[RMDB]
RNA sequence: GGGAACGACUCGAGUAGAGUCGAAAACGGGGCCUCCCUGCUUUUCCUAUCUGCCCCCUGCCCUGAGCACUGAGGCUGGGCACGGGGAGCGUGGAGGGGCGAGCCUGCACGGUGGGCCAUGACCAGGCCAAAUUGGCAGUCUCCGGGCUGGGGACCACCACCGUGCAGUGUUCGCACUGCACGGUGGAAAAGAAACAACAACAACAAC
Reactivity to 2A3 in 0.01 (KOAc 150mM, MgCl2 10mM, bicine 150mM(pH8.5), 24C), signal-to-noise 1, nucleotides 027 to 156: c010g000g050g070g040c050c040u110c040c000c000u000g020c000u130u040u010u020c000c000u050a220u060c090u160g100c000c010c010c000c010u030g000c000c000c000u020g210a010g030c050a040c200u140g060a060g200g120c000u000g020g000g010c020a020c060g020g000g000g020a060g020c000g040u130g000g080a060g000g080g070g000c050g000a000g000c010c010u010g030c040a090c060g030g040u030g060g010g000c080c010a030u060g060a070c050c080a020g020g000c000c040a050a120a190u060u070g030g000c000a000g000u010c000u000c030c040g060g030g080c090u120g020g050g000g000a010c000c000a000
Notes
The record gives the reactivity of an RNA of 207 nucleotides to 2A3. Conditions: 150 mM KOAc, 10 mM MgCl2 and 150 mM bicine (pH 8.5), 24 C. It was measured as part of the RMDB library OK3TST.